[RMDB]
Structure probing data (DMS and 2A3) for a 177-nucleotide construct. Reactivities are given for positions 27 through 126. DMS adducts were read by reverse transcription with MarathonRT. For 2A3 the reverse transcriptase was SuperScript II with manganese. The reactions ran in a buffer of 150 mM KOAc, 10 mM MgCl2 and 150 mM bicine (pH 8.5), at 24 C. The DMS profile rests on 3,279 reads.

RNA sequence: GGGAACGACUCGAGUAGAGUCGAAAACUUUUGCCGGUGCCGCGCCGACAUCGGACGAAUGCUGACGAAGGACCUGCUGCGCGUCUCGCGGGCCGGCGGCGGCUACCACCCGCAGUUCGCCGGCCGCUGUUAACUGCAGGUUCGCCUGCAGUUAACAAAAAGAAACAACAACAACAAC
Reactivity to DMS in 0.01 (KOAc 150mM, MgCl2 10mM, bicine 150mM(pH8.5), 24C), signal-to-noise 2, nucleotides 027 to 126: c060u000u000u000u010g010c030c000g010g020u000g000c050c050g030c100g020c060c040g000a100c050a030u000c020g010g010a100c060g000a070a050u000g020c050u000g000a130c100g000a090a100g000g000a070c070c000u010g010c020u000g000c050g000c080g000u010c040u010c040g020c010g020g010g040c000c000g020g010c020g000g000c000g000g000c060u000a100c140c110a150c290c020c030g030c030a120g000u000u020c040g020c000c000g000g020c010c010g000c050
Reactivity to 2A3 in 0.01 (KOAc 150mM, MgCl2 10mM, bicine 150mM(pH8.5), 24C), signal-to-noise 1, nucleotides 027 to 126: c030u100u050u090u190g040c040c010g050g050u050g000c030c030g070c020g030c040c020g040a030c010a060u120c030g000g030a040c020g070a100a060u140g040c010u030g080a090c040g040a100a040g020g010a040c000c040u030g050c000u040g000c060g000c000g060u000c020u030c060g010c010g000g120g040c000c000g000g000c000g010g000c020g000g030c000u070a100c030c020a020c000c020c000g000c040a050g090u140u110c000g000c000c000g000g000c000c000g010c000